[RMDB]
RNA sequence: GGGAACGACUCGAGUAGAGUCGAAAAAACAUUCAAUGCAAUUGAGCCGACGCCGUGGGAAAUCACUUUCGUGGAACCAUUUGAUCCCACGCUCGUUACUGUUAAUGAUUGUGGUUUGCACGUGGUUAGCGAUGUACCUAUUCGUAGGUACAUCGCUAAAAGAAACAACAACAACAAC
Reactivity to 2A3 in 0.01 (KOAc 150mM, MgCl2 10mM, bicine 150mM(pH8.5), 24C), signal-to-noise 2, nucleotides 027 to 126: a000a000c060a030u180u080c080a090a080u140g110c010a000a020u030u040g000a040g030c010c010g040a020c090g060c110c010g080u060g000g000g030a050a060a040u060c010a010c030u110u180u120c020g110u110g020g000a040a010c010c060a070u010u000u180g050a050u280c000c000c000a010c020g000c000u000c000g060u040u040a030c010u200g050u190u130a060a020u020g170a030u110u030g000u000g010g020u000u000u020g040c010a000c060g010u050g040g020u050u020

This 177-nucleotide RNA was probed chemically with 2A3. Reactivities are given for positions 27 through 126. The data come from the RNA Mapping Database (RMDB), libraries RFM100 and RFMREP.